[RMDB]
An RNA of 177 nucleotides, treated with DMS and 2A3 and read out base by base. The data come from the RNA Mapping Database (RMDB), libraries RFM100 and RFMREP. For DMS the reverse transcriptase was MarathonRT. The RNA was probed in 150 mM KOAc, 10 mM MgCl2 and 150 mM bicine (pH 8.5) at 24 C.

RNA sequence: GGGAACGACUCGAGUAGAGUCGAAAAUUCUCGAGUUGAUCAUUGUUUGUAUUCUUGAGACAUUAUUUGGGGACGAGAUGUUUUGUUGACUCGAUAUAAGAAGGGGCUUUAUGGAAGAAAUUGUAGUUAGAUAAAUAACGUUCGCGUUAUUUAUCUAAAAAGAAACAACAACAACAAC
Reactivity to DMS in 0.01 (KOAc 150mM, MgCl2 10mM, bicine 150mM(pH8.5), 24C), signal-to-noise 3, nucleotides 027 to 126: u010u000c010u000c000g020a110g010u010u000g010a060u020c130a160u000u000g010u000u000u010g010u000a090u000u000c010u000u000g000a110g010a050c060a050u010u010a060u010u020u010g020g000g000g010a070c090g010a060g020a060u010g000u010u000u010u010g010u010u000g000a110c060u000c020g020a060u010a050u020a080a060g010a080a070g010g010g010g020c060u000u000u000a040u020g000g010a050a090g000a060a050a080u000u010g010u010a080g010u000
Reactivity to 2A3 in 0.01 (KOAc 150mM, MgCl2 10mM, bicine 150mM(pH8.5), 24C), signal-to-noise 3, nucleotides 027 to 126: u030u000c010u020c020g030a080g000u040u020g090a110u090c080a070u040u000g120u110u130u160g090u090a290u070u050c000u020u040g000a030g000a020c000a020u040u070a080u050u150u080g010g000g000g000a020c010g040a040g000a020u020g030u020u030u020u020g040u010u030g020a020c000u000c030g020a020u010a000u010a120a040g100a010a010g010g000g010g000c010u030u030u090a030u060g010g020a030a020g020a040a130a050u040u030g010u010a030g020u000